Background: An RNA of 177 nucleotides, treated with DMS and 2A3 and read out base by base. For DMS, 30,057 sequencing reads were counted. The RNA was probed in 150 mM KOAc, 10 mM MgCl2 and 150 mM bicine (pH 8.5) at 24 C. The data come from the RNA Mapping Database (RMDB), library OK1LIB.
RNA sequence: GGGAACGACUCGAGUAGAGUCGAAAAUGAGGUAAAUGUCAGUCAGCCAAAGGUCGGCAGCAACAACAUCUCAAAUAUGAGCAUCAAGGAUUUCAGACCUCCACACGAUGAUGUUGCAAAAUUGCUCCAUUAAGCAUUACUUCGGUAAUGCUUAAUGAAAAGAAACAACAACAACAAC
Reactivity to DMS in 0.01 (KOAc 150mM, MgCl2 10mM, bicine 150mM(pH8.5), 24C), signal-to-noise 9, nucleotides 027 to 126: u010g010a060g000g020u010a040a070a070u010g000u020c050a070g010u010c050a080g010c050c070a070a110a080g000g010u020c060g010g020c050a080g000c050a060a060c070a040a090c110a040u010c020u000c060a050a100a070u030a070u010g000a040g000c080a040u010c100a080a090g010g010a070u010u020u030c130a090g000a090c110c050u000c020c060a070c150a100c180g010a070u010g010a060u000g010u010u000g000c090a030a020a050a100u010u020g000c050u010c050
Reactivity to 2A3 in 0.01 (KOAc 150mM, MgCl2 10mM, bicine 150mM(pH8.5), 24C), signal-to-noise 9, nucleotides 027 to 126: u150g010a040g030g050u090a070a080a060u110g030u060c030a010g030u010c020a010g050c020c020a110a060a000g090g030u060c030g030g010c030a010g020c010a010a030c000a010a030c010a050u030c020u030c080a060a130a010u300a140u140g040a020g020c010a040u060c050a080a070g050g020a070u060u140u100c050a060g050a120c010c010u040c030c000a110c020a010c080g020a020u080g010a020u050g020u020u020g010c040a030a040a050a090u090u100g020c020u000c020